[RMDB]
RNA sequence: GGGAACGACUCGAGUAGAGUCGAAAAGAUAUGGAUCCGAUAGGCGAUGAGUCGCGUGUCGGAAACGACACCGACGAGCCUAUACGGAUCCUAAGUCAAAACGACAUCACCUUCGGGUGAUGUCGAAGGUCUCAAUUAACUUCGGUUAAUUGAGACCAAAAGAAACAACAACAACAAC
Reactivity to DMS in 0.01 (KOAc 150mM, MgCl2 10mM, bicine 150mM(pH8.5), 24C), signal-to-noise 2, nucleotides 027 to 126: g000a020u000a020u020g000g010a010u010c000c000g000a060u000a000g010g020c010g020a140u010g010a120g010u000c000g000c300g010u000g000u000c000g020g000a010a010a010c010g020a030c000a000c000c020g010a010c000g010a020g020c000c000u000a000u000a070c000g020g000a000u000c000c000u010a000a080g000u000c010a070a100a110a300c010g020a040c000a000u000c000a000c000c000u010u020c240g020g020g000u000g010a000u010g010u000c000g010a030a060
Reactivity to 2A3 in 0.01 (KOAc 150mM, MgCl2 10mM, bicine 150mM(pH8.5), 24C), signal-to-noise 1, nucleotides 027 to 126: g010a000u010a000u030g000g010a000u000c010c000g010a010u010a010g020g000c030g210a300u220g030a140g010u020c030g020c230g020u010g000u000c010g000g000a000a000a000c020g000a000c000a000c000c000g000a010c000g000a020g020c020c000u020a010u000a010c000g000g000a000u010c000c000u000a000a000g000u000c000a000a000a100a190c050g000a010c000a000u000c000a000c020c000u060u070c270g190g010g010u000g010a010u000g010u000c000g000a010a020
Chemical mapping of a 177-nucleotide RNA with DMS and 2A3. Reactivities are given for positions 27 through 126. 2A3 adducts were read by reverse transcription with SuperScript II with manganese. Conditions: 150 mM KOAc, 10 mM MgCl2 and 150 mM bicine (pH 8.5), 24 C. For 2A3, 5,847 sequencing reads were counted. The data come from the RNA Mapping Database (RMDB), library TTRDES.